[RMDB]
RNA sequence: GGGAACGACUCGAGUAGAGUCGAAAAGUGCUGAUUGAAAUUCAUGGGAGCCUCUCCAUAAUGGAUGAACGCCGCGAUAGUGCGCGCAGUCGCGACGUAAACGCUCUGUAUUCCCGUUCAGGCCUCAGCUAGCAGUAGGAUUCGUCCUACUGCUAGCAAAAGAAACAACAACAACAAC
Reactivity to DMS in 0.01 (KOAc 150mM, MgCl2 10mM, bicine 150mM(pH8.5), 24C), signal-to-noise 2, nucleotides 027 to 126: g010u000g030c040u000g020a150u000u000g030a080a120a040u000u000c060a050u010g000g020g000a140g010c080c010u010c060u000c010c030a100u010a060a030u000g000g030a050u010g000a090a030c020g010c030c000g020c020g000a010u000a070g000u010g010c040g010c030g010c020a250g000u000c020g010c010g020a000c010g010u010a060a080a110c130g000c000u010c020u010g000u000a160u000u010c010c000c000g010u000u000c070a110g010g000c040c080u010c080a140
Reactivity to 2A3 in 0.01 (KOAc 150mM, MgCl2 10mM, bicine 150mM(pH8.5), 24C), signal-to-noise 1, nucleotides 027 to 126: g040u020g010c020u010g060a160u250u030g070a080a120a030u040u050c000a010u050g020g000g020a030g090c010c000u030c000u000c020c000a070u240a180a070u210g010g000a010u070g010a070a010c040g020c000c010g030c000g020a020u020a020g230u190g080c040g000c030g000c080a000g020u000c000g020c040g000a000c000g000u000a070a070a000c050g000c000u020c000u040g000u050a100u030u060c000c000c000g020u060u070c020a020g000g140c010c030u000c000a010